Chemical mapping of a 207-nucleotide RNA with 2A3. Conditions: 150 mM KOAc, 10 mM MgCl2 and 150 mM bicine (pH 8.5), 24 C. Reactivities are given for positions 27 through 156.
RNA sequence: GGGAACGACUCGAGUAGAGUCGAAAAAGAGAGGGCUAACACCUAAUACCUUUUCUGUUAGAAAUGAUGUAAUUCCUAGUGGAUUAUGUAGGUUUAGAAGAGAUGAUAACACAUUUAAAGUAUCUGUAAUAGGAUACAUUAGGUAUUCUAAAAAAAGCUUCACAUCAAUCUUCGGAUUGAUGUGAAGAAAAGAAACAACAACAACAAC
Reactivity to 2A3 in 0.01 (KOAc 150mM, MgCl2 10mM, bicine 150mM(pH8.5), 24C), signal-to-noise 1, nucleotides 027 to 156: a000g090a020g000a050g010g020g050c040u060a120a000c000a030c030c000u060a090a070u060a060c000c000u090u060u030u050c070u050g040u070u040a040g020a040a180a070u060g120a020u080g020u060a010a060u010u010c010c030u050a030g040u100g220g000a050u030u110a010u100g020u070a100g000g000u030u010u090a010g000a080a060g020a020g000a070u150g050a040u160a180a020c030a000c000a060u060u220u260a090a090a000g000u010a000u030c000u000g010u000a080a120u020a220g000g000a000u000a010c010a040u000u080a000g040g040u030a060u030u090c010u080a020a020a000a000a020a000a000g040